Background: An RNA of 177 nucleotides, treated with DMS and 2A3 and read out base by base.
[RMDB]
RNA sequence: GGGAACGACUCGAGUAGAGUCGAAAAGGCCAAGCCCAGAUAGCACUCGUCAGAGGCCACGAUGACGCCCCGUCCGCGCGCCCACUCGACUACCUUCUGCAGGUGCUCCAUGCCCAGCACACGGCCGUGCCCGGAGUAGUUUCGACUACUCCGGGCAAAAAGAAACAACAACAACAAC
Reactivity to DMS in 0.01 (KOAc 150mM, MgCl2 10mM, bicine 150mM(pH8.5), 24C), signal-to-noise 1, nucleotides 027 to 126: g010g020c000c000a120a130g010c030c010c050a070g020a070u000a110g000c030a060c090u000c040g050u040c000a060g080a060g000g000c100c000a090c030g000a050u080g050a030c050g000c000c000c020c120g020u000c090c000g110c080g000c070g000c030c030c060a030c030u000c000g050a060c030u000a030c000c160u000u050c040u000g050c210a110g090g000u000g010c030u040c070c100a050u000g010c000c000c000a070g000c080a030c160a120c160g030g030c070c160g000
Reactivity to 2A3 in 0.01 (KOAc 150mM, MgCl2 10mM, bicine 150mM(pH8.5), 24C), signal-to-noise 2, nucleotides 027 to 126: g050g070c030c030a010a050g000c000c070c000a020g030a060u240a000g080c040a010c050u030c060g090u060c100a000g040a020g080g050c030c000a050c010g090a080u150g000a010c020g000c000c000c050c000g070u050c040c040g000c000g010c000g000c050c000c010a030c020u040c000g040a030c010u130a090c010c000u070u160c050u100g030c010a030g020g030u000g030c010u000c010c000a110u130g020c000c000c000a010g020c000a020c000a010c000g040g000c040c000g080
It was measured as part of the RMDB library OK1LIB. Values cover nucleotides 27 to 126. For DMS, 979 sequencing reads were counted. Reactivities are rounded to 0.1 and cut off at 0 and 3.